[RMDB]
RNA sequence: GGGAACGACUCGAGUAGAGUCGAAAAGCCAGGAUCGGCGGCACGAACGUCUCGAUGAUGUGGAUCGGUCCCAUCAGGUUGAUCGCGACCACGUUGCUCCACUGGUCGUGGGUGAGUCGGUCAACAAAUCGUACGACGGUUUCGACCGUCGUACGAUAAAAGAAACAACAACAACAAC
Reactivity to DMS in 0.01 (KOAc 150mM, MgCl2 10mM, bicine 150mM(pH8.5), 24C), signal-to-noise 2, nucleotides 027 to 126: g020c000c000a150g000g000a100u000c070g000g000c030g030g000c010a200c020g000a060a120c120g000u000c030u010c070g020a070u000g030a140u000g010u030g000g010a080u000c110g010g000u000c000c010c050a140u020c050a100g040g010u010u000g000a040u000c020g000c000g000a080c020c010a030c100g010u010u000g000c090u010c030c100a170c140u010g010g010u000c010g040u000g000g000g030u020g000a090g010u000c010g010g010u000c010a020a060c080a020a120
Reactivity to 2A3 in 0.01 (KOAc 150mM, MgCl2 10mM, bicine 150mM(pH8.5), 24C), signal-to-noise 1, nucleotides 027 to 126: g000c010c000a040g080g090a050u100c050g010g000c000g000g120c020a000c070g070a160a000c010g040u050c050u060c070g070a100u070g000a030u080g110u140g060g050a090u080c070g000g180u100c000c010c000a010u030c020a030g210g000u130u090g110a020u030c000g000c000g040a020c000c000a020c080g020u050u140g090c080u040c080c050a100c010u100g000g040u020c020g000u010g020g020g030u100g020a020g010u100c000g010g010u020c000a000a000c020a070a090
Source information
The data come from the RNA Mapping Database (RMDB), library OK2TST. This 177-nucleotide RNA was probed chemically with DMS and 2A3. For 2A3 the reverse transcriptase was SuperScript II with manganese. 2A3 is a SHAPE reagent: it acylates the 2'-hydroxyl of flexible nucleotides of all four kinds. Reactivities are given for positions 27 through 126. The reactions ran in a buffer of 150 mM KOAc, 10 mM MgCl2 and 150 mM bicine (pH 8.5), at 24 C.